[RMDB]
Structure probing data (2A3 and DMS) for a 177-nucleotide construct. 2A3 adducts were read by reverse transcription with SuperScript II with manganese. DMS adducts were read by reverse transcription with MarathonRT.

RNA sequence: GGGAACGACUCGAGUAGAGUCGAAAAAUUCAGGAGAGUAGAUGAUUCGCGUUAAGUGUGUGUGAAUGGGAUGUCGUCACACAACGAAGGGAGAGCGCGGUGAAUCAUUGCAUCCGCUCCAAACGAAAUCAAUUGUCAUAUUCGUAUGACAAUUGAUAAAAGAAACAACAACAACAAC
Reactivity to 2A3 in 0.01 (KOAc 150mM, MgCl2 10mM, bicine 150mM(pH8.5), 24C), signal-to-noise 9, nucleotides 027 to 126: a000u090u050c030a020g010g000a010g000a010g020u080a020g000a030u010g000a000u020u030c010g000c010g040u050u080a120a030g040u070g010u000g000u000g010u000g110a040a020u030g020g000g020a010u030g050u110c080g010u010c020a000c010a000c000a030a030c030g050a080a060g080g050g030a160g020a060g210c040g000c020g030g020u020g000a000a010u020c010a010u000u020g000c000a010u000c010c000g000c000u000c000c000a070a070a030c110g070a170a060
Reactivity to DMS in 0.01 (KOAc 150mM, MgCl2 10mM, bicine 150mM(pH8.5), 24C), signal-to-noise 9, nucleotides 027 to 126: a130u000u000c070a130g010g000a030g010a050g010u000a240g010a020u000g000a030u000u000c010g010c020g010u000u010a060a110g010u010g030u000g020u000g000u000g000a060a050u000g010g010g010a030u000g010u010c230g010u000c000a010c010a010c010a030a030c050g010a130a100g010g010g000a080g010a050g010c050g010c090g010g010u010g010a030a030u000c030a020u000u000g010c010a020u000c010c010g000c000u000c000c010a060a070a090c190g000a060a060
The reactions ran in a buffer of 150 mM KOAc, 10 mM MgCl2 and 150 mM bicine (pH 8.5), at 24 C. It was measured as part of the RMDB library M2PK90.